[RMDB]
RNA sequence: GGGAACGACUCGAGUAGAGUCGAAAACAGUAGGUAUCGGUCCAAAUACAAUGUUACCGCCAAGAUUAACAGUUUUUACAAAGACGUGUUUGUUUGGAGUACGAGAUUGCGAAGUGUAAAAAUGUAUGAAGAACAUAUAGAUUAAAAGGUACAUACAGUGAUAAUGCACAUUCGUGUGCAUUAUCACAAAAGAAACAACAACAACAAC
Reactivity to DMS in 0.01 (KOAc 150mM, MgCl2 10mM, bicine 150mM(pH8.5), 24C), signal-to-noise 2, nucleotides 027 to 156: c040a080g010u000a020g020g030u000a010u000c020g080g050u010c030c060a070a130a060u000a090c040a070a060u000g000u000u000a040c010c000g030c010c030a050a150g030a140u000u000a090a130c090a140g000u000u000u020u010u010a140c150a110a120a120g010a020c030g050u000g020u000u000u000g040u000u000u000g000g010a060g030u000a120c070g010a100g010a110u010u000g030c000g000a040a100g010u000g000u000a000a060a070a080a080u010g000u000a030u010g030a080a110g020a040a040c030a050u000a100u000a080g000a210u000u000a060a040a040a040g010g040u000a050c060a080u000a040c060a140
Reactivity to 2A3 in 0.01 (KOAc 150mM, MgCl2 10mM, bicine 150mM(pH8.5), 24C), signal-to-noise 3, nucleotides 027 to 156: c040a010g090u100a010g070g020u060a020u080c030g000g070u040c050c010a040a120a020u130a030c060a060a100u050g010u090u080a050c030c000g000c010c020a100a060g060a170u150u170a030a010c040a050g020u020u060u080u080u130a120c110a070a070a000g030a060c020g030u010g030u020u060u010g080u010u010u060g030g010a030g010u000a010c050g030a000g010a160u030u020g010c010g020a040a020g040u010g000u090a020a060a110a060a040u110g010u070a050u080g080a100a050g030a040a010c000a030u140a000u080a080g080a030u050u130a020a000a150a000g030g020u080a040c000a000u130a050c060a010